An RNA of 207 nucleotides, treated with 2A3 and DMS and read out base by base. For DMS, 2,408 sequencing reads were counted. The reactions ran in a buffer of 150 mM KOAc, 10 mM MgCl2 and 150 mM bicine (pH 8.5), at 24 C.

[RMDB]
RNA sequence: GGGAACGACUCGAGUAGAGUCGAAAAUUGAUUAAUAGAAAUAGGAAAUAGACAGGAAAAGUGCAUUUCUUUCAUUUCUUCUUUCAGUUUACAUAGCAGAGACUGAAUAUGAAUUCUAUGAAUGUGAUUGUGUCUCUAUUGGAUGAGUGACAAAUGAACUCCUAGGAUGAUUCGUCAUCCUAGGAGUAAAAGAAACAACAACAACAAC
Reactivity to 2A3 in 0.01 (KOAc 150mM, MgCl2 10mM, bicine 150mM(pH8.5), 24C), signal-to-noise 2, nucleotides 027 to 156: u030u040g020a010u120u070a100a040u110a090g010a010a130a050u120a080g000g030a020a030a020u090a100g030a040c060a070g000g100a080a040a020a040g130u090g030c030a060u000u010u090c000u020u050u000c010a030u000u000u050c000u010u000c010u020u050u010c010a010g010u010u040u040a070c050a090u130a100g070c090a010g040a000g010a100c020u020g000a010a000u090a100u100g010a010a040u120u000c080u050a030u100g020a060a010u100g060u050g140a100u070u070g030u020g060u050c000u010c020u080a060u030u140g070g030a050u050g000a030g060u050g060a020c020a000a100a060u290g010a000
Reactivity to DMS in 0.01 (KOAc 150mM, MgCl2 10mM, bicine 150mM(pH8.5), 24C), signal-to-noise 1, nucleotides 027 to 156: u020u000g020a070u010u010a080a100u010a060g000a040a050a180u000a120g000g030a050a040a070u000a080g030a140c020a060g010g010a070a100a060a130g000u000g020c000a100u000u000u000c000u000u010u000c040a040u000u020u000c040u000u010c040u010u010u000c000a030g010u000u000u000a090c040a160u000a140g030c050a090g010a040g000a030c020u010g040a020a050u000a080u010g010a070a040u010u010c020u000a050u010g010a070a050u020g010u000g040a050u000u010g000u020g000u020c010u010c040u000a100u020u000g000g010a090u000g010a080g020u000g020a200c120a050a050a140u000g000a070
2A3 adducts were read by reverse transcription with SuperScript II with manganese.